An RNA of 177 nucleotides, treated with 2A3 and DMS and read out base by base.
It was measured as part of the RMDB libraries RFM100 and RFMREP.

RNA sequence: GGGAACGACUCGAGUAGAGUCGAAAAACCAGACCUGUCUGAGUUUUUCGUUCAAGUUUGGUUGAAAUCGGCUUGAGGUAUAUGAACGUGGUUGGGAUAUGGAGAUUGGGAGAUCAAAGAAGCGAAAAGAAGGGAGAAGAUUCGUCUUCUCCCUUCUAAAAGAAACAACAACAACAAC
Reactivity to 2A3 in 0.01 (KOAc 150mM, MgCl2 10mM, bicine 150mM(pH8.5), 24C), signal-to-noise 2, nucleotides 027 to 126: a000c000c000a000g000a000c000c060u040g010u050c000u100g060a030g140u010u130u000u120u110c040g030u050u020c000a000a050g010u020u060u080g060g030u000u030g050a070a130a050u040c020g000g000c010u000u060g040a060g030g060u040a100u070a090u280g080a150a000c100g030u070g060g030u090u050g000g020g000a000u040a010u140g050g000a010g000a040u010u070g040g000g000a020g000a010u000c050a040a090a000g110a050a000g010c100g100a040a180a000
Reactivity to DMS in 0.01 (KOAc 150mM, MgCl2 10mM, bicine 150mM(pH8.5), 24C), signal-to-noise 5, nucleotides 027 to 126: a020c010c000a040g010a030c020c080u010g010u000c010u010g000a070g010u020u000u000u020u000c010g010u010u000c030a030a020g010u000u010u020g020g020u000u010g010a070a090a090u010c010g000g010c030u000u010g010a080g020g030u010a080u020a080u020g010a040a060c080g010u000g000g000u010u000g010g000g000a100u030a070u000g020g000a050g010a090u010u020g000g000g020a090g000a060u010c080a050a050a100g010a070a090g010c100g010a070a070a070

For 2A3 the reverse transcriptase was SuperScript II with manganese. For 2A3, 628 sequencing reads were counted.